[RMDB]
RNA sequence: GGGAACGACUCGAGUAGAGUCGAAAAGCUGAGAAUGAGGCCUGCAACUCAUUUCCCCAUUAAACAUUCUGAGAACAUCUGCACCGGUUUCCAAGGCUUCUCCCUCACUAAUUGCUUUGAUUAUUGUAUGGCUAAAUAUCUUCGGAUAUUUAGCCAUAAAAGAAACAACAACAACAAC
Reactivity to DMS in 0.01 (KOAc 150mM, MgCl2 10mM, bicine 150mM(pH8.5), 24C), signal-to-noise 2, nucleotides 027 to 126: g010c100u020g000a060g030a080a020u000g030a020g010g010c050c010u010g010c130a080a090c020u000c020a050u020u010u010c020c000c020c080a140u020u020a080a080a130c090a010u010u030c080u000g020a090g040a090a120c050a040u020c050u000g000c030a050c040c050g000g060u020u000u020c040c040a060a070g000g030c020u010u000c040u010c030c010c030u000c070a080c100u000a040a050u000u000g000c070u000u000u010g000a050u000u000a100u020u000g000u000
Reactivity to 2A3 in 0.01 (KOAc 150mM, MgCl2 10mM, bicine 150mM(pH8.5), 24C), signal-to-noise 4, nucleotides 027 to 126: g060c060u040g040a020g080a110a070u090g010a010g050g010c000c010u020g030c010a060a100c000u000c050a020u020u010u010c010c020c010c010a040u140u180a060a060a040c070a090u120u050c070u090g060a040g030a160a020c020a070u040c010u060g040c010a040c020c040g040g020u010u050u020c040c010a060a010g000g010c000u040u000c030u040c010c020c000u010c000a030c020u080a070a110u050u110g020c070u110u050u080g080a100u060u230a100u090u200g120u060